[RMDB]
RNA sequence: GGGAACGACUCGAGUAGAGUCGAAAAAUGCGCGAGACCUGGCACCCGCUGGGCGUGGUAGGCGUGAUCAGCGCGUUCAACUUCCCAGUCGCGGUGUGGUCGUGGAAUACCGCGCUGGCGCUGGUCAACUGCAUCAUGCAUUCGUGCAUGAUGCAGUAAAAGAAACAACAACAACAAC
Reactivity to 2A3 in 0.01 (KOAc 150mM, MgCl2 10mM, bicine 150mM(pH8.5), 24C), signal-to-noise 2, nucleotides 027 to 126: a000u090g020c080g010c030g000a070g040a120c000c030u040g110g050c050a060c030c030c020g050c010u060g020g000g020c060g010u040g030g120u080a040g010g020c040g000u040g040a090u090c050a000g060c020g000c030g090u060u090c030a050a020c030u070u030c010c020c040a000g140u200c060g000c070g000g010u010g000u020g020g070u020c040g020u100g030g040a060a030u020a090c030c010g000c000g020c030u030g040g000c020g000c040u040g010g000u010c000a000
Reactivity to DMS in 0.01 (KOAc 150mM, MgCl2 10mM, bicine 150mM(pH8.5), 24C), signal-to-noise 3, nucleotides 027 to 126: a050u010g010c020g010c010g020a150g010a090c030c010u000g020g000c000a060c030c030c100g020c080u000g010g010g030c300g020u000g010g000u000a070g000g010c080g020u010g000a010u000c070a040g000c010g020c000g000u000u000c130a080a080c130u000u000c000c010c000a040g020u010c010g040c040g020g020u000g020u000g000g010u000c090g000u030g000g010a160a070u000a080c050c020g010c010g010c030u000g010g010c010g000c000u010g010g000u000c020a150